[RMDB]
RNA sequence: GGGAACGACUCGAGUAGAGUCGAAAACGCUGGGAGGGACGUAUAAGUACGAAGAACUACCCAGAGCUAUUCUGAAGCGCGCACGGAAUAGCGACGAAGGGUAGGGAGUACUUGCCAACCUCCUGUGCUGAAGCGCGCACGGCAACCGAAAGGUGCGGGGACAGGACUAGUUCGCUAGUCCUGUCCCAAAAGAAACAACAACAACAAC
Reactivity to 2A3 in 0.01 (KOAc 150mM, MgCl2 10mM, bicine 150mM(pH8.5), 24C), signal-to-noise 1, nucleotides 027 to 156: c040g000c000u010g000g000g000a020g000g010g090a030c060g070u190a270u130a300a030g000u000a000c020g130a300a000g000a010a000c010u000a000c020c000c000a000g000a000g030c000u000a000u010u000c000u020g030a270a090g000c000g010c000g000c000a030c020g000g010a000a000u000a000g000c000g060a160c000g000a000a000g040g000g000u000a010g000g000g000a010g010u000a010c000u000u110g020c020c020a040a070c020c000u010c000c000u000g000u000g000c000u000g000a100a020g000c020g000c000g020c000a020c010g000g000c010a030a000c010c000g030a030a010a010g020g010u010g000c020g020
Source: RMDB library RNAMAK, as collected in RNAgym. Chemical mapping of a 207-nucleotide RNA with 2A3. The reactions ran in a buffer of 150 mM KOAc, 10 mM MgCl2 and 150 mM bicine (pH 8.5), at 24 C.